This 207-nucleotide RNA was probed chemically with 2A3 and DMS. It was measured as part of the RMDB library OK3TST.

[RMDB]
RNA sequence: GGGAACGACUCGAGUAGAGUCGAAAAUUCAUAACCUGAGACUUACUUUCAUUUUCUAGGUGCUGGAGAAUCUGGUAAAAGCACCAUUGUGAAGCAGAUGAGGAUCCUGCAUGUUAAUGGGUUUAAUGGAGAGUAAGUGUCAAAUCUGUGCAGGGGGAGCUAAUAGUUUCUUCGGAAACUAUUAGCUAAAAGAAACAACAACAACAAC
Reactivity to 2A3 in 0.01 (KOAc 150mM, MgCl2 10mM, bicine 150mM(pH8.5), 24C), signal-to-noise 1, nucleotides 027 to 156: u120u090c030a040u110a110a070c010c040u020g020a030g020a030c020u000u010a010c020u030u060u030c020a080u110u090u070u070c060u080a050g010g020u010g000c030u050g020g050a100g000a060a190u070c100u090g040g050u100a010a130a000a000g000c040a020c030c010a000u000u100g050u010g050a070a030g000c020a020g020a120u170g070a130g110g000a030u070c040c040u000g030c000a020u060g040u060u120a160a080u090g040g000g000u060u070u110a110a090u140g030g000a050g000a000g030u020a040a010g010u000g000u000c010a000a000a190u100c090u070g080u050g040c030a020g030g030g000g000g000
Reactivity to DMS in 0.01 (KOAc 150mM, MgCl2 10mM, bicine 150mM(pH8.5), 24C), signal-to-noise 1, nucleotides 027 to 156: u000u020c010a060u000a090a190c050c030u000g000a100g000a280c030u020u030a030c010u000u010u010c000a060u000u020u000u000c020u000a060g050g030u010g010c030u000g020g000a190g020a190a090u000c050u020g000g000u000a050a050a210a010g000c030a030c030c010a100u010u010g000u000g030a130a200g000c100a030g010a080u000g020a220g010g030a160u010c000c010u000g010c050a100u000g020u000u010a050a070u000g020g040g040u000u000u000a090a080u080g010g010a150g000a090g030u000a010a080g030u010g010u000c060a100a110a090u010c010u000g000u010g030c000a090g000g000g000g030g010
In probing experiments dimethyl sulfate is read out at A N1 and C N3, which are open when not base-paired.
The reactions ran in a buffer of 150 mM KOAc, 10 mM MgCl2 and 150 mM bicine (pH 8.5), at 24 C.
2A3 adducts were read by reverse transcription with SuperScript II with manganese.
2A3 is a SHAPE reagent: it acylates the 2'-hydroxyl of flexible nucleotides of all four kinds.
The 2A3 profile rests on 705 reads.